[RMDB]
RNA sequence: GGGAACGACUCGAGUAGAGUCGAAAAGAUAUGGAUUCAGGGAGCUCCGGGAUCGGAAACGAUCCCAGGAGCAUCGAUCUGACUGUCCUAAGUCGUAACUUGGGAAGGCUUCGGCCUUCCCAAGUAAUCCUCCAUUUAAGUUCGCUUAAAUGGAGGAAAAAGAAACAACAACAACAAC
Reactivity to DMS in 0.01 (KOAc 150mM, MgCl2 10mM, bicine 150mM(pH8.5), 24C), signal-to-noise 3, nucleotides 027 to 126: g010a060u010a300u000g020g000a050u000u000c010a030g010g010g000a040g000c000u000c010c000g000g010g000a010u010c010g020g010a070a070a150c000g010a000u000c000c000c000a030g030g000a010g030c090a020u010c100g000a070u020c000u000g000a030c300u000g010u000c010c010u020a040a110g020u000c030g000u010a090a040c000u000u000g000g000g000a000a020g000g000c010u000u010c200g040g020c000c010u000u010c000c010c000a000a000g000u000a030a120
Reactivity to 2A3 in 0.01 (KOAc 150mM, MgCl2 10mM, bicine 150mM(pH8.5), 24C), signal-to-noise 1, nucleotides 027 to 126: g000a000u050a050u180g010g020a010u020u030c000a000g040g020g000a030g020c030u000c010c040g000g000g000a010u000c010g000g060a110a090a040c020g000a010u020c050c020c050a000g000g000a000g000c020a000u000c000g000a030u020c000u000g030a030c120u220g040u050c010c010u050a090a050g080u030c020g050u070a100a000c000u010u000g040g000g010a020a040g000g010c050u090u140c300g060g000c010c010u010u000c000c000c000a000a000g000u000a000a000

Notes: The record gives the reactivity of an RNA of 177 nucleotides to DMS and 2A3. 2A3 adducts were read by reverse transcription with SuperScript II with manganese.